[RMDB]
RNA sequence: GGGAACGACUCGAGUAGAGUCGAAAAGAUAUGGAAAGUUCGGUGAUUCAACGGUUCACAAGAGGGCUCUCGGAAACGAGAGCCUACCCACCUUGUGAACCGCGCAUUUCACCAACUUUCCUAAGUCGAUAACCAUAUGGUUCGCCAUAUGGUUAUCAAAAGAAACAACAACAACAAC
Reactivity to DMS in 0.01 (KOAc 150mM, MgCl2 10mM, bicine 150mM(pH8.5), 24C), signal-to-noise 6, nucleotides 027 to 126: g000a030u000a120u010g010g000a010a020a020g010u000u000c250g070g020u000g010a020u000u010c240a100a080c000g010g000u000u000c000a010c000a020a010g000a160g010g000g020c000u000c000u000c010g000g000a030a060a090c010g010a010g000a020g030c000c000u000a010c040c030c110a300c070c010u000u000g010u000g000a000a000c000c000g000c040g000c230a100u000u000u000c000a000c010c000a010a000c000u000u000u000c000c000u000a000a050g010u000c040
Reactivity to 2A3 in 0.01 (KOAc 150mM, MgCl2 10mM, bicine 150mM(pH8.5), 24C), signal-to-noise 1, nucleotides 027 to 126: g000a000u030a010u080g000g010a030a000a010g010u090u220c300g020g030u010g010a030u210u160c200a200a080c030g010g010u000u000c010a010c010a010a010g010a030g020g000g000c010u000c000u000c000g000g020a030a020a010c000g000a000g020a030g000c010c000u000a000c000c000c000a030c000c010u000u010g000u000g010a000a000c000c000g000c010g000c020a130u050u050u010c010a010c010c000a000a000c000u000u000u030c000c000u000a010a000g020u040c040